[RMDB]
RNA sequence: GGGAACGACUCGAGUAGAGUCGAAAACAGAACUGGAUGGGCCGUGUGCUUAACCAGGACAAGAUCUCCUUCUCUCCAACGGUGUUGCCAACUCAUGAUUCUCCUAACCUGUGCUUGGAGAGACGUGCUACCAUAUAGGUGUUCGCACCUAUAUGAACUAUAAAAACGUAUUCGUACGUUUUUAUAGAAAAGAAACAACAACAACAAC
Reactivity to 2A3 in 0.01 (KOAc 150mM, MgCl2 10mM, bicine 150mM(pH8.5), 24C), signal-to-noise 7, nucleotides 027 to 156: c050a020g050a070a040c000u020g010g020a060u050g070g040g000c050c080g300u240g090u250g130c010u030u030a080a060c010c000a010g030g040a020c060a050a070g020a130u020c020u010c040c000u030u010c000u000c000u000c010c000a010a010c020g000g030u080g040u130u150g050c040c070a080a090c090u090c130a090u150g070a180u280u060c080u070c060c050u050a040a060c010c030u100g040u120g100c070u050u020g000g000a000g000a000g000a010c030g030u090g050c030u090a090c030c010a000u010a000u000a000g020g000u010g010u020u030c150g010c070a000c000c000u000a000u000a000u010g000a010a010
Reactivity to DMS in 0.01 (KOAc 150mM, MgCl2 10mM, bicine 150mM(pH8.5), 24C), signal-to-noise 4, nucleotides 027 to 156: c070a140g010a110a180c010u000g010g000a190u000g000g010g000c010c030g000u020g030u000g050c010u000u000a060a120c020c030a050g000g010a160c060a090a090g010a110u010c020u010c010c030u000u000c020u000c020u000c020c020a050a100c050g000g010u010g000u000u000g010c020c030a080a120c050u000c090a090u000g010a130u000u000c030u000c010c020u000a050a060c020c060u010g010u000g020c080u000u010g000g000a040g000a040g010a030c080g030u000g020c050u000a170c070c000a030u000a010u000a000g020g030u000g010u000u000c300g020c020a010c000c000u000a000u000a000u010g000a060a170
An RNA of 207 nucleotides, treated with 2A3 and DMS and read out base by base. Source: RMDB library M2RFPK, as collected in RNAgym. For DMS the reverse transcriptase was MarathonRT. Conditions: 150 mM KOAc, 10 mM MgCl2 and 150 mM bicine (pH 8.5), 24 C. For 2A3, 6,733 sequencing reads were counted.